[RMDB]
RNA sequence: GGGAACGACUCGAGUAGAGUCGAAAAGAUAUGGAUCGUAAUACUUCAACAGCUGGGAUCGGAAACGAUCCCAGACAUGAAGAUAUUGACGAUCCUAAGUCAAAAGUCUUUUGUUCGCAAAAGACAACUUUUUACGUACGUUCGCGUACGUAAAAAGAAAAGAAACAACAACAACAAC
Reactivity to 2A3 in 0.01 (KOAc 150mM, MgCl2 10mM, bicine 150mM(pH8.5), 24C), signal-to-noise 1, nucleotides 027 to 126: g050a000u100a020u210g010g010a000u010c000g000u000a000a030u000a020c020u010u040c030a170a140c050a300g100c010u010g000g000g000a000u010c010g010g060a010a170a000c000g010a010u020c030c000c000a010g020a010c000a040u040g000a040a030g110a140u020a000u020u060g270a040c000g000a000u010c000c000u000a050a010g040u020c060a020a070a070a130g000u000c000u000u030u010u030g050u070u080c300g000c080a000a000a000a000g020a000c000a010a020
Reactivity to DMS in 0.01 (KOAc 150mM, MgCl2 10mM, bicine 150mM(pH8.5), 24C), signal-to-noise 2, nucleotides 027 to 126: g000a020u000a300u000g010g000a010u030c000g000u000a090a030u000a000c000u010u010c000a100a110c300a200g010c010u000g020g010g010a000u000c000g000g000a120a100a300c010g000a000u000c000c000c010a000g010a000c060a160u000g000a010a010g010a090u000a000u000u000g030a040c000g010a010u000c000c000u000a020a070g000u000c020a110a190a110a170g010u000c000u000u000u000u000g010u010u000c290g020c010a000a010a010a000g010a020c000a070a090

Annotation: Chemical mapping of a 177-nucleotide RNA with 2A3 and DMS. Source: RMDB library TTRDES, as collected in RNAgym. For 2A3, 2,269 sequencing reads were counted.